[RMDB]
RNA sequence: GGGAACGACUCGAGUAGAGUCGAAAAUCGCGGCCCCGCCAAGCGCUUGCAACUGCAGGCCGGUGGCGGUGACGAUAAUGUCCGCAUCGAGGUGCCCACCGGAUUUGAGUGCAAUACCGGUGGCGUCACACCACCGCAAGUUCGCUUGCGGUGGUGUAAAAGAAACAACAACAACAAC
Reactivity to DMS in 0.01 (KOAc 150mM, MgCl2 10mM, bicine 150mM(pH8.5), 24C), signal-to-noise 2, nucleotides 027 to 126: u010c080g000c060g030g000c060c080c010c010g000c000c040a130a130g010c210g020c000u000u020g010c020a300a170c240u020g020c030a000g010g000c010c070g010g000u030g010g000c050g000g010u000g010a080c070g000a060u000a090a040u000g010u010c000c010g010c060a040u020c150g000a120g010g020u000g000c080c000c010a000c000c010g010g000a300u010u030u020g000a210g030u040g000c040a060a050u000a150c010c000g010g010u000g000g010c110g000u000c040
Reactivity to 2A3 in 0.01 (KOAc 150mM, MgCl2 10mM, bicine 150mM(pH8.5), 24C), signal-to-noise 2, nucleotides 027 to 126: u100c040g060c030g030g110c000c000c000c020g000c000c000a040a020g040c090g000c250u060u040g040c060a300a300c300u300g000c030a000g000g040c010c000g110g030u050g000g020c060g000g000u020g090a050c070g050a020u060a130a100u190g040u000c000c020g000c020a080u140c060g090a030g000g070u020g030c060c000c000a000c050c000g000g020a050u050u040u150g260a230g140u280g120c020a010a090u050a300c010c000g030g000u010g000g030c050g000u020c000